[RMDB]
RNA sequence: GGGAACGACUCGAGUAGAGUCGAAAAGGACUCCGUGAGGAGUCCGUGCAGCGAGAGCUGCACAAGGGCUUAUUGUGACACGGUGCCCCUCCUCUACGAUGUUGAGUAGAGGAGAGUAGUCGUCUCACGAUUUAUAGUGAGACUGACCAGUGUCAGAAUGUUACUACACAUUCGUGUGUAGUAACAUAAAAGAAACAACAACAACAAC
Reactivity to 2A3 in 0.01 (KOAc 150mM, MgCl2 10mM, bicine 150mM(pH8.5), 24C), signal-to-noise 3, nucleotides 027 to 156: g000g010a000c010u010c010c010g030u070g020a050g000g010a000g000u010c000c000g000u000g000c000a000g000c000g020a040g000a020g050c000u000g050c000a000c000a000a030g020g000g010c030u150u090a020u090u300g090u010g020a000c000a000c000g050g030u060g010c000c000c000c000u010c000c000u000c000u000a010c000g090a090u150g060u220u110g070a040g000u000a000g010a000g000g000a000g000a000g000u030a000g000u000c000g000u000c000u000c000a000c000g070a090u030u250u130a270u150a050g000u000g000a000g000a000c000u000g000a000c010c010a010g000u000g000u000c000a000g020a000
Reactivity to DMS in 0.01 (KOAc 150mM, MgCl2 10mM, bicine 150mM(pH8.5), 24C), signal-to-noise 2, nucleotides 027 to 156: g040g000a000c000u000c000c000g000u020g000a230g020g000a010g000u000c000c010g000u000g010c020a010g000c000g010a180g000a200g030c000u000g060c000a010c020a060a060g020g000g020c030u000u010a050u010u000g010u000g010a060c020a030c030g000g010u010g050c050c020c010c000u000c010c010u000c000u000a020c010g000a230u000g010u010u000g040a300g000u010a020g000a040g020g010a010g000a030g000u000a020g020u010c020g010u010c010u010c000a020c000g000a220u010u010u010a190u000a100g020u010g000a030g000a040c000u000g060a010c010c000a070g030u010g010u000c000a030g000a170

The record gives the reactivity of an RNA of 207 nucleotides to 2A3 and DMS. The DMS profile rests on 5,222 reads. The 2A3 profile rests on 2,400 reads. For DMS the reverse transcriptase was MarathonRT. As a SHAPE reagent, 2A3 marks flexible, mostly unpaired nucleotides at the ribose 2'-OH. Reactivities are rounded to 0.1 and cut off at 0 and 3. It was measured as part of the RMDB library OK3TST.